This 207-nucleotide RNA was probed chemically with 2A3.
Source: RMDB library M2RFPK, as collected in RNAgym.
The 2A3 profile rests on 671 reads.
For 2A3 the reverse transcriptase was SuperScript II with manganese.
The reactions ran in a buffer of 150 mM KOAc, 10 mM MgCl2 and 150 mM bicine (pH 8.5), at 24 C.
[RMDB]
RNA sequence: GGGAACGACUCGAGUAGAGUCGAAAAGAAUUGGAAUGUAAGCUACUUCUUCCAGUAGCUGCGUCAUAACAUCAAGGUUAUGCAUACUGAGCCGAAGCUCAGCUUCGGUCCUCCAAGGAAGACCAAAUACAGCUCAGCCCGUUCGCGGGCUGAGCAACUUGAUCUAGCAGUUCGCUGCUAGAUCAAGAAAAGAAACAACAACAACAAC
Reactivity to 2A3 in 0.01 (KOAc 150mM, MgCl2 10mM, bicine 150mM(pH8.5), 24C), signal-to-noise 1, nucleotides 027 to 156: g040a000a100u060u040g010g000a000a040u010g000u000a010a030g000c000u000a000c000u060u140c030u040u000c000c040a000g010u000a000g000c000u000g000c000g010u020c000a010u010a000a000c000a100u230c180a150a040g300g000u000u000a000u000g030c010a000u040a090c000u040g000a000g000c010c000g040a000a000g030c040u090c300a050g000c010u010u010c000g000g000u010c020c030u020c020c060a080a050g000g000a000a000g000a020c050c100a020a170a020u300a170c120a010g020c000u000c000a000g000c000c000c000g010u060u120c120g000c030g140g000g000c000u010g000a000g030c000a000a010